Chemical mapping of a 177-nucleotide RNA with DMS and 2A3.
For DMS, 3,595 sequencing reads were counted.

RNA sequence: GGGAACGACUCGAGUAGAGUCGAAAACUAAUGCCGUCUGCUUCACGAACAUUUAUAUAAUUUUCAUCUGAAGUAAGCGAAAAUUUAUAUCUGUUUGCCAACAGCCUUUACAACAACAGCAGCAGUAUCCAUUACCACCAUUCGUGGUGGUAAUGGAAAAAGAAACAACAACAACAAC
Reactivity to DMS in 0.01 (KOAc 150mM, MgCl2 10mM, bicine 150mM(pH8.5), 24C), signal-to-noise 3, nucleotides 027 to 126: c030u000a080a090u030g000c020c040g020u020c030u000g010c010u000u000c170a190c090g000a000a010c010a070u010u020u000a030u000a050u040a020a040u010u010u010u000c000a150u020c060u010g010a110a130g030u020a070a080g000c300g000a000a010a030a000u000u000u000a010u000a010u010c010u010g010u020u000u000g020c070c060a050a060c080a040g000c010c060u070u000u010a100c150a080a080c250a060a030c120a040g010c050a050g020c040a080g000u000a080
Reactivity to 2A3 in 0.01 (KOAc 150mM, MgCl2 10mM, bicine 150mM(pH8.5), 24C), signal-to-noise 5, nucleotides 027 to 126: c040u080a010a120u080g040c030c030g070u050c030u040g000c000u010u030c060a010c080g010a010a000c000a010u030u040u020a130u020a030u020a020a060u010u010u020u010c020a120u010c070u050g100a110a020g090u090a120a010g110c050g080a010a030a000a000u050u070u040a090u020a040u040c020u010g010u000u060u040g040c020c020a020a000c010a150g040c020c010u150u230u190a060c050a150a010c010a060a010c010a050g050c020a010g000c000a000g060u060a060
Record summary: High DMS reactivity at an A or C suggests that its Watson-Crick edge is free. For DMS the reverse transcriptase was MarathonRT.